[RMDB]
RNA sequence: GGGAACGACUCGAGUAGAGUCGAAAAAGUGAGAACCAUUAGGAAGGAAAGGAACAGAAAAUGAACCAACCUGAGUGUUAGGAGACUUGCAUCUAGUCCUGACUCCGGUACCAACCGAAUGCAUGUCGCGAUACGAAAAGUUCGCUUUUCGUAUCGCAAAAGAAACAACAACAACAAC
Reactivity to 2A3 in 0.01 (KOAc 150mM, MgCl2 10mM, bicine 150mM(pH8.5), 24C), signal-to-noise 2, nucleotides 027 to 126: a020g140u100g000a120g010a070a050c010c000a050u050u120a030g050g000a070a000g010g030a000a110a020g010g050a030a070c020a020g120a030a250a020a160u070g050a040a030c000c010a040a020c010c010u040g000a040g040u060g050u110u080a030g040g050a070g000a030c030u020u050g000c030a110u000c050u080a020g060u010c000c010u010g020a010c010u000c020c010g000g030u070a100c030c010a040a040c010c000g020a000a010u050g010c060a070u090g060u150c080
Reactivity to DMS in 0.01 (KOAc 150mM, MgCl2 10mM, bicine 150mM(pH8.5), 24C), signal-to-noise 3, nucleotides 027 to 126: a100g010u010g020a120g010a150a100c120c010a040u020u010a110g000g030a080a150g000g010a010a060a120g000g000a070a160c100a050g000a060a030a050a060u010g040a080a250c020c050a070a130c070c010u000g040a080g010u010g020u000u000a030g000g000a070g000a070c040u000u000g000c080a060u010c140u000a090g030u010c040c060u010g000a080c070u000c040c050g000g000u010a070c170c110a040a110c040c050g010a040a030u000g000c050a070u010g000u000c180
Conditions: 150 mM KOAc, 10 mM MgCl2 and 150 mM bicine (pH 8.5), 24 C. An RNA of 177 nucleotides, treated with 2A3 and DMS and read out base by base. High 2A3 reactivity points to a flexible backbone, as in loops and unpaired stretches. Source: RMDB library OK2TRN, as collected in RNAgym. Values cover nucleotides 27 to 126. For DMS, 1,487 sequencing reads were counted.